[RMDB]
Structure probing data (DMS and 2A3) for a 177-nucleotide construct.
For 2A3 the reverse transcriptase was SuperScript II with manganese.
The reactions ran in a buffer of 150 mM KOAc, 10 mM MgCl2 and 150 mM bicine (pH 8.5), at 24 C.
Values cover nucleotides 27 to 126.
RNA sequence: GGGAACGACUCGAGUAGAGUCGAAAAGGCUGCUCAGAUACAUGGGCCCAUGAAAUUGAUGAACUGAGAGCUGCUUCCAGCCCUGCGCGCACCAUCUGGAAUUCCAGUCUGAGGUUACAAUUAGAACUUAUCGAAAAGCAUUCGUGCUUUUCGAUAAAAAAGAAACAACAACAACAAC
Reactivity to DMS in 0.01 (KOAc 150mM, MgCl2 10mM, bicine 150mM(pH8.5), 24C), signal-to-noise 5, nucleotides 027 to 126: g020g030c040u000g000c030u010c010a040g020a130u030a060c080a080u000g010g000g000c040c020c020a080u010g020a060a090a090u000u010g010a110u020g000a130a060c040u010g000a070g020a090g010c010u000g020c110u010u000c060c020a090g010c050c030c010u010g000c090g010c050g000c050a090c050c040a040u030c020u010g000g000a140a080u010u000c130c010a020g000u000c040u020g000a070g000g000u000u000a060c120a070a080u020u010a080g010a120a110c150
Reactivity to 2A3 in 0.01 (KOAc 150mM, MgCl2 10mM, bicine 150mM(pH8.5), 24C), signal-to-noise 5, nucleotides 027 to 126: g050g000c040u080g040c010u070c010a030g020a100u130a120c060a070u070g010g010g020c000c010c020a050u120g110a080a090a070u130u160g040a110u070g020a080a040c020u030g020a010g020a010g040c030u010g010c010u060u000c000c010a010g010c000c000c010u020g010c070g000c010g010c030a010c020c010a040u110c020u030g050g000a050a070u130u020c020c010a000g020u000c030u070g090a060g030g010u050u050a050c040a100a090u120u070a080g030a070a030c040
DMS adducts were read by reverse transcription with MarathonRT.